An RNA of 170 nucleotides, treated with DMS and 2A3 and read out base by base. For 2A3 the reverse transcriptase was SuperScript II with manganese. As a SHAPE reagent, 2A3 marks flexible, mostly unpaired nucleotides at the ribose 2'-OH. The RNA was probed in 150 mM KOAc, 10 mM MgCl2 and 150 mM bicine (pH 8.5) at 24 C.

RNA sequence: GGGAACGACUCGAGUAGAGUCGAAAAGCUACUAAUCACGAUCGUUAUUGCUCUGUCCAUCAAGGAGCUCAUGUGGCUUCUAAUGAUGCAAUAAUGACUCGUUGUUUAGCUAUUCAUUCUUGUUUUACCAGGCAGCACUUCGGUGCUGCCAAAAGAAACAACAACAACAAC
Reactivity to DMS in 0.01 (KOAc 150mM, MgCl2 10mM, bicine 150mM(pH8.5), 24C), signal-to-noise 2, nucleotides 027 to 129: g030c060u040a080c080u010a030a060u030c210a040c040g080a020u060c000g000u000u020a000u000u000g000c000u070c230u110g080u090c080c150a090u020c050a000a000g020g030a010g000c030u010c010a090u130g060u060g010g040c030u020u030c050u020a120a040u060g020a140u070g020c090a020a020u000a050a030u010g010a030c140u000c050g040u050u010g020u000u000u000a000g030c090u000a040u060u050c100a120u020u110c070u020u010g030u000u000u000u000a120c120c090a080
Reactivity to 2A3 in 0.01 (KOAc 150mM, MgCl2 10mM, bicine 150mM(pH8.5), 24C), signal-to-noise 4, nucleotides 027 to 129: g010c000u050a030c040u080a010a040u030c020a010c010g010a010u000c000g010u000u000a000u000u000g000c000u020c090u140g230u090c090c010a040u050c020a070a070g000g000a000g010c050u010c030a090u230g190u290g050g020c000u020u000c000u020a080a030u060g030a010u090g000c000a000a000u010a000a000u010g010a000c090u000c010g010u030u070g010u020u040u010a000g000c030u110a090u000u100c070a040u100u040c080u040u080g040u050u050u030u010a050c010c000a010